[RMDB]
RNA sequence: GGGAACGACUCGAGUAGAGUCGAAAAUCACCACAGCCCGUUCCCCAGCUGAUGAUGCCUUGCAGGGUGAGCCGGCGCGCUGCAGCUUGGUCCUCACACACCAGCGUGCCUCCGGAAUCACCCUGGGACGGAAACGCGCAGCUCAGCGCUGUGGACAUCAUACCGUGAGUUUCGACUCACGGUAUGAAAAAGAAACAACAACAACAAC
Reactivity to 2A3 in 0.01 (KOAc 150mM, MgCl2 10mM, bicine 150mM(pH8.5), 24C), signal-to-noise 2, nucleotides 027 to 156: u110c020a030c010c020a000c000a000g010c000c040c020g000u010u010c000c000c000c000a010g000c000u050g010a210u070g030a140u100g060c010c010u070u160g070c010a000g000g020g000u010g010a010g050c000c000g010g000c020g010c040g000c030u050g030c010a110g020c040u230u260g060g000u100c050c080u220c040a040c010a000c010a000c090c000a000g010c000g030u010g000c000c040u000c000c020g020g010a080a150u010c000a000c000c000c000u000g000g000g000a010c070g000g030a020a100a010c060g020c000g000c040a010g020c000u040c080a070g010c060g000c100u000g010u000g000g010a000c020a050
Reactivity to DMS in 0.01 (KOAc 150mM, MgCl2 10mM, bicine 150mM(pH8.5), 24C), signal-to-noise 2, nucleotides 027 to 156: u010c060a120c000c010a060c030a040g090c000c040c060g020u000u000c000c000c000c160a300g000c020u010g010a020u020g000a200u020g020c020c030u020u010g060c020a010g040g000g010u020g020a030g050c030c010g000g000c050g040c010g000c040u000g000c040a200g010c050u000u000g040g000u000c090c060u000c130a230c040a090c100a160c170c010a040g010c010g020u000g000c000c050u030c020c010g020g010a060a110u000c020a020c020c010c000u000g000g010g010a060c030g000g020a160a040a090c010g010c020g000c000a060g040c020u020c050a270g020c130g000c020u000g040u020g020g010a150c080a170
The record gives the reactivity of an RNA of 207 nucleotides to 2A3 and DMS. The data come from the RNA Mapping Database (RMDB), library OK3TST. The RNA was probed in 150 mM KOAc, 10 mM MgCl2 and 150 mM bicine (pH 8.5) at 24 C.